[RMDB]
RNA sequence: GGGAACGACUCGAGUAGAGUCGAAAAUCGUCUCAUCAUGCUCGUGUUUAUUUUAAUCAAUCUGUAAAAUCUUGGGUACUCGAAGAUUUGGGCAGUACUAAUGGAACUAUGAUUGGUCAUAAUAGAGCACUAUCGUAUCGUUCGCGAUACGAUAGUGAAAAGAAACAACAACAACAAC
Reactivity to DMS in 0.01 (KOAc 150mM, MgCl2 10mM, bicine 150mM(pH8.5), 24C), signal-to-noise 2, nucleotides 027 to 126: u000c110g030u020c020u000c020a060u020c130a140u000g010c000u000c030g030u000g020u010u010u030a060u010u000u000u000a010a030u000c020a030a010u000c030u000g010u010a100a090a080a040u000c020u000u000g020g020g000u000a010c040u000c060g020a120a120g000a140u000u000u010g000g010g040c190a020g020u010a010c010u000a090a080u010g000g010a020a060c110u000a080u000g010a020u010u000g010g000u000c050a010u000a040a020u000a060g010a070g010
Reactivity to 2A3 in 0.01 (KOAc 150mM, MgCl2 10mM, bicine 150mM(pH8.5), 24C), signal-to-noise 3, nucleotides 027 to 126: u080c010g040u050c000u010c040a070u050c000a040u150g000c020u020c050g050u020g110u100u160u060a140u050u060u000u120a040a030u000c010a020a010u020c000u020g050u080a000a050a010a190u000c000u000u040g180g020g060u060a030c030u020c090g080a150a060g070a300u110u130u190g050g050g000c020a000g020u020a000c020u050a030a100u070g050g000a040a010c030u060a090u150g020a010u030u010g040g000u030c040a000u030a150a010u030a080g050a030g050

Chemical mapping of a 177-nucleotide RNA with DMS and 2A3. It was measured as part of the RMDB library OK2TST. For DMS the reverse transcriptase was MarathonRT. High 2A3 reactivity points to a flexible backbone, as in loops and unpaired stretches.